[RMDB]
RNA sequence: GGGAACGACUCGAGUAGAGUCGAAAAAUCGCGGCUGGGGCUUAGGACCCCACUCCUGCGAGACAGGAGUAAUCCUAAACAGGGUUUUCACCCUUCCUUUAGUUUCCUUCCUCUCCUGGAGAGGUCUUCUGCCCUAGCCCGGUCUUCGAAGCUUCCUUACAUUAGCAUUCUUCGGAAUGCUAAUGUAAAAAGAAACAACAACAACAAC
Reactivity to 2A3 in 0.01 (KOAc 150mM, MgCl2 10mM, bicine 150mM(pH8.5), 24C), signal-to-noise 4, nucleotides 027 to 156: a010u020c010g010c090g000g010c000u000g010g000g010g000c010u010u020a020g000g020a000c010c040c020c000a050c000u010c010c000u050g020c170g040a010g000a030c300a070g000g010a000g010u040a010a030u080c020c000u040a050a030a060c300a130g040g010g020u130u180u300u300c160a060c000c000c000u010u010c000c000u010u020u000a010g000u020u030u020c020c000u020u070c000c000u010c000u000c000c000u000g010g010a010g000a010g010g000u000c000u020u000c010u020g010c000c010c000u000a000g000c000c000c000g000g000u000c030u080u080c070g110a110a050g060c070u040u020c000c010u010